[RMDB]
RNA sequence: GGGAACGACUCGAGUAGAGUCGAAAAUGUAUGUGGGGCUCGGCCUGGCGGCAAUAGGCGGGAAGCGUGGACACGUCACACACAUCUUGGCUUCUGGCCGCGCUCCUCCAGGGGCUUCUAGAGUGGCUAAAUCCCUCCAGUUCGCUGGAGGGAUUUAAAAAGAAACAACAACAACAAC
Reactivity to DMS in 0.01 (KOAc 150mM, MgCl2 10mM, bicine 150mM(pH8.5), 24C), signal-to-noise 2, nucleotides 027 to 126: u020g000u010a090u020g010u010g000g000g010g020c040u000c070g020g000c050c030u000g010g000c080g000g000c070a060a080u000a120g010g000c080g010g000g020a060a070g020c050g020u000g000g000a050c110a070c180g000u000c070a070c160a080c130a100c130a080u000c110u030u020g000g010c000u000u010c060u010g000g020c000c020g000c060g020c010u000c010c030u000c030c040a080g010g000g010g000c010u010u000c090u010a090g010a110g000u030g000g000c060
Reactivity to 2A3 in 0.01 (KOAc 150mM, MgCl2 10mM, bicine 150mM(pH8.5), 24C), signal-to-noise 2, nucleotides 027 to 126: u170g060u100a030u160g050u100g030g030g000g000c020u060c030g020g010c030c000u030g040g060c050g030g000c040a060a220u040a210g000g010c000g000g000g020a000a030g040c070g010u040g010g010a010c010a030c150g130u140c050a050c000a000c000a000c000a190u050c050u060u110g200g000c020u010u000c000u060g050g000c020c000g020c000g000c020u020c000c010u000c000c000a010g000g000g050g000c000u050u000c010u170a050g000a000g100u100g040g070c020